[RMDB]
RNA sequence: GGGAACGACUCGAGUAGAGUCGAAAAUAUUACAUCUUCGGAUGUAAUAACUGGUGGUGGCUGGCUUGUUGCUAGUGGCGCAACUGAUGCCAUGACUGCGCAAUCGCUCUGAAUUCGUUCAGAGCAAUCUAGUUAAGGGGUUCGCCCCUUAACUAGAAAAAGAAACAACAACAACAAC
Reactivity to 2A3 in 0.01 (KOAc 150mM, MgCl2 10mM, bicine 150mM(pH8.5), 24C), signal-to-noise 1, nucleotides 027 to 126: u030a000u000u000a000c020a000u000c010u030u040c200g110g020a010u000g000u000a000a000u000a000a060c060u130g060g010u030g050g040u050g050g010c080u010g010g020c000u050u120g020u010u050g000c020u040a100g140u080g200g000c070g000c050a040a040c000u070g090a120u140g040c000c000a030u120g100a100c050u030g000c080g000c040a040a130u100c110g000c000u000c010u010g010a030a020u110u060c130g070u080u000c010a000g010a000g020c010a000a020
Reactivity to DMS in 0.01 (KOAc 150mM, MgCl2 10mM, bicine 150mM(pH8.5), 24C), signal-to-noise 4, nucleotides 027 to 126: u000a030u010u000a000c000a000u000c000u000u000c240g020g010a010u000g000u000a000a000u000a020a140c100u000g010g020u000g010g020u000g000g000c040u000g020g040c070u000u000g010u000u010g020c020u000a140g030u000g020g020c120g000c010a030a040c060u010g010a090u000g000c010c030a030u010g010a090c060u000g020c070g000c140a100a080u000c130g000c010u010c000u000g000a010a020u000u020c170g020u000u000c000a000g000a020g020c000a020a010
Conditions: 150 mM KOAc, 10 mM MgCl2 and 150 mM bicine (pH 8.5), 24 C. An RNA of 177 nucleotides, treated with 2A3 and DMS and read out base by base. For 2A3, 1,451 sequencing reads were counted. Reactivities are given for positions 27 through 126.